RNA sequence: GGGAACGACUCGAGUAGAGUCGAAAAGAUUGUCAGACUCCUUAGUCUGCCACGAGACAAUGUCGAUUUACACACCAGCUGCAUUCGUCUGGAUAACAUCUAGCGUCGUGCUGUGCUUCGUGCUCAGCAUCUUCUGCUACAUCAAGAUGAGAGGUUGCAUGUAAAGAGGUUUCGACCUCUUUACAUGAAAAGAAACAACAACAACAAC
Reactivity to DMS in 0.01 (KOAc 150mM, MgCl2 10mM, bicine 150mM(pH8.5), 24C), signal-to-noise 5, nucleotides 027 to 156: g020a140u000u000g020u010c000a100g010a050c020u000c130c110u000u010a120g020u000c010u010g000c030c060a100c090g000a180g010a070c030a070a080u010g000u000c040g000a140u000u000u000a110c070a110c030a110c050c000a060g030c020u000g000c020a150u000u000c020g040u010c000u010g000g020a060u010a060a090c110a260u010c060u000a030g020c050g010u010c300g010u010g000c000u000g010u000g010c010u000u000c300g020u000g030c000u000c000a020g000c000a020u000c020u010u010c030u010g040c010u000a040c070a070u000c010a050a050g010a030u000g000a100g010a170g000g010u000u000g010
Reactivity to 2A3 in 0.01 (KOAc 150mM, MgCl2 10mM, bicine 150mM(pH8.5), 24C), signal-to-noise 7, nucleotides 027 to 156: g070a070u110u140g020u090c030a020g000a020c020u090c040c100u200u250a010g010u000c010u020g010c030c000a050c060g090a040g010a030c060a060a060u110g020u070c060g060a110u020u110u270a100c120a020c010a030c030c050a020g030c030u060g010c010a050u040u040c050g040u020c040u020g030g040a060u090a170a070c040a030u020c030u030a000g000c000g000u020c000g000u020g010c000u010g010u010g000c010u070u110c220g180u180g010c000u000c010a000g000c000a040u030c030u030u010c030u100g000c020u050a030c030a110u140c050a080a050g020a020u050g030a040g010a020g130g070u060u090g010
Structure probing data (DMS and 2A3) for a 207-nucleotide construct. The reactions ran in a buffer of 150 mM KOAc, 10 mM MgCl2 and 150 mM bicine (pH 8.5), at 24 C. Values cover nucleotides 27 to 156. For DMS, 14,456 sequencing reads were counted. The 2A3 profile rests on 5,521 reads.